RNA sequence: GGGAACGACUCGAGUAGAGUCGAAAAGGGGUGUUCGCACCCCAAAGGUUCAUGUCCUACUGUUCAAGCCUCCAAGCUGUGCCUUGGGUGGCUUUGGGGCAUGGACCAAAAGGGACCUUCGGGUCCCGGUACGUAUUAGGUUCGCCUAAUACGUACCAAAAGAAACAACAACAACAAC
Reactivity to 2A3 in 0.01 (KOAc 150mM, MgCl2 10mM, bicine 150mM(pH8.5), 24C), signal-to-noise 1, nucleotides 027 to 126: g000g000g010g000u020g020u050u130c200g050c060a020c000c010c000c000a000a050a020g000g000u000u000c000a010u010g010u000c020c010u040a110c110u170g130u210u170c060a020a000g000c000c000u000c010c000a010a010g010c080u250g170u250g300c040c000u010u010g020g020g100u140g030g000c030u010u000u010g000g000g000g000c000a000u000g000g010a000c000c000a000a010a010a000g010g000g000a000c010c000u040u070c180g110g000g000u000c010c000c000
Reactivity to DMS in 0.01 (KOAc 150mM, MgCl2 10mM, bicine 150mM(pH8.5), 24C), signal-to-noise 5, nucleotides 027 to 126: g010g010g020g030u000g020u000u010c210g020c030a030c000c010c000c000a000a020a060g010g010u000u000c000a010u000g010u000c000c000u000a090c300u010g010u000u010c250a050a030g010c000c000u000c000c000a010a010g010c010u020g010u010g010c180c010u000u000g000g000g010u000g000g010c000u000u000u000g010g010g020g000c000a010u000g010g010a010c010c010a000a010a050a090g000g010g000a010c000c000u000u010c200g030g010g010u000c010c000c000